[RMDB]
RNA sequence: GGGAACGACUCGAGUAGAGUCGAAAAGGUCGAGGAGUUGCAUUCACCCCGAAGGAUGGCGGUCGGGUGGUGAUGCGCCGACGCUGACGGCCAGCUCGGGCCCGCGUUCAGGUCCCGAGUUCGGGUGCGUUACUUAACGGUUCGCCGUUAAGUAACGAAAAGAAACAACAACAACAAC
Reactivity to DMS in 0.01 (KOAc 150mM, MgCl2 10mM, bicine 150mM(pH8.5), 24C), signal-to-noise 3, nucleotides 027 to 126: g010g000u020c030g020a280g000g000a170g000u020u000g020c040a040u010u010c000a070c090c010c020c020g010a040a090g000g020a050u010g000g030c060g020g000u000c010g010g000g000u010g000g030u010g020a040u040g010c030g020c000c010g000a090c260g000c020u010g010a110c030g000g000c020c020a080g000c000u020c020g010g000g010c030c000c010g020c300g010u050u020c160a100g020g000u020c000c000c000g000a010g000u000u000c100g000g010g000u010g010
Reactivity to 2A3 in 0.01 (KOAc 150mM, MgCl2 10mM, bicine 150mM(pH8.5), 24C), signal-to-noise 6, nucleotides 027 to 126: g060g010u020c040g040a070g040g060a120g050u120u080g070c010a020u080u110c000a020c000c010c000c010g020a030a010g130g050a140u220g070g110c150g050g060u020c020g010g020g000u120g070g070u030g040a060u030g020c040g010c010c000g000a000c010g030c050u040g020a030c040g080g020c000c010a010g000c010u010c000g000g000g000c000c020c000g050c030g050u150u200c090a060g000g000u030c000c010c000g010a000g010u010u050c050g010g000g050u100g030